[RMDB]
Overview:
The record gives the reactivity of an RNA of 207 nucleotides to 2A3. The RNA was probed in 150 mM KOAc, 10 mM MgCl2 and 150 mM bicine (pH 8.5) at 24 C. Reactivities are given for positions 27 through 156. It was measured as part of the RMDB library RNAMAK.
RNA sequence: GGGAACGACUCGAGUAGAGUCGAAAACUAUCGAGUUCGCUCGAUAGAAAAAACCUUUGUGUCCCUUUAAGCAGCAACAGCCUAAUACGUCCCAUUGGGACGUUAGGACAUGCUGUAAGGGACACUCUGGUAAAAAAGUAAUUCUUCGGAAUUACAAGUUAUAGGGAGACUUCGGUCUCCCUAUAACAAAAGAAACAACAACAACAAC
Reactivity to 2A3 in 0.01 (KOAc 150mM, MgCl2 10mM, bicine 150mM(pH8.5), 24C), signal-to-noise 1, nucleotides 027 to 156: c000u000a000u000c000g030a000g060u200u040c190g080c090u000c050g000a020u000a000g150a020a060a010a000a000a000c000c010u000u000u000g000u000g000u000c000c010c000u000u040u050a260a030g010c010a030g000c010a000a070c000a190g000c000c000u080a110a070u260a160c050g000u000c000c020c130a300u280u300g000g000g000a000c000g000u020u000a010g000g010a040c010a040u070g030c000u000g000u010a010a010g000g020g000a010c000a000c000u000c010u000g000g000u030a170a080a000a000a000a010g010u020a000a010u020u000c020u040u060c200g120g030a030a030u010u030a040c050a080a060